[RMDB]
RNA sequence: GGGAACGACUCGAGUAGAGUCGAAAAGCUCGGAGACGAGCAAGGCUGACAAAACAAUGUCCCAACCUCCACGUGGUGUCGGCUGGAUAAUGCUGCAUUAUGUUGCAUUUAUCAACUGGGAAUAAAAAUCGGCUAUAGCAUUCGUGCUAUAGCCGAUAAAAGAAACAACAACAACAAC
Reactivity to DMS in 0.01 (KOAc 150mM, MgCl2 10mM, bicine 150mM(pH8.5), 24C), signal-to-noise 1, nucleotides 027 to 126: g000c000u010c000g040g030a280g010a210c080g000a030g000c020a080a120g120g010c000u000g030a000c000a010a020a060a200c260a060a000u050g050u000c000c010c000a080a030c000c030u080c070c050a130c060g010u030g050g000u000g020u000c000g000g010c010u000g000g030a030u000a000a000u000g020c000u000g000c000a140u010u030a120u080g000u000u000g010c030a000u000u010u000a030u010c030a020a040c150u000g000g010g020a040a090u000a120a030a080a070
Reactivity to 2A3 in 0.01 (KOAc 150mM, MgCl2 10mM, bicine 150mM(pH8.5), 24C), signal-to-noise 4, nucleotides 027 to 126: g000c010u000c010g020g030a120g030a070c020g000a000g010c000a000a060g010g000c000u010g000a010c020a010a070a020a010c050a060a060u070g010u020c000c010c000a010a030c010c010u030c020c020a100c130g090u170g000g000u000g010u000c000g000g000c010u000g030g000a000u010a020a000u010g000c010u010g020c030a070u100u100a170u300g020u000u030g000c000a020u040u110u110a020u010c020a000a020c010u030g020g010g000a020a020u090a090a030a010a010
An RNA of 177 nucleotides, treated with DMS and 2A3 and read out base by base. Values cover nucleotides 27 to 126. For DMS the reverse transcriptase was MarathonRT.